RNA sequence: GGGAACGACUCGAGUAGAGUCGAAAAGUCGCGCCUGUAUGGUGGCUCUUACGUCCUGGCUAUGGUUAACGAUGGCCGCAUGCUGACUUCAGCCGCGAAGCGAGGUAAGCCGCUGGAAUCAAUUGUCGUUUACGACUACGAUUCGGUGUCCGUAGCGUCGCAGAACUACUUUCGAGUAGUUCUGCGAAAAAGAAACAACAACAACAAC
Reactivity to 2A3 in 0.01 (KOAc 150mM, MgCl2 10mM, bicine 150mM(pH8.5), 24C), signal-to-noise 1, nucleotides 027 to 156: g030u020c000g020c040g000c060c010u190g030u210a260u300g000g120u000g020g000c000u030c060u050u050a080c110g060u060c040c050u080g050g000c040u090a020u030g000g070u070u070a010a030c070g050a080u020g000g000c000c010g000c040a020u180g100c000u020g040a150c000u110u070c030a110g080c100c050g010c050g110a010a090g000c110g080a020g140g000u020a150a000g000c020c000g000c020u010g060g170a020a040u020c000a000a110u140u200g000u000c000g110u160u170u240a210c100g070a120c020u020a080c100g040a090u030u000c060g000g000u070g080u080c000c000g080u070a040g010c020g020
Structure probing data (2A3) for a 207-nucleotide construct. Source: RMDB library OK3TST, as collected in RNAgym. The reactions ran in a buffer of 150 mM KOAc, 10 mM MgCl2 and 150 mM bicine (pH 8.5), at 24 C. For 2A3 the reverse transcriptase was SuperScript II with manganese.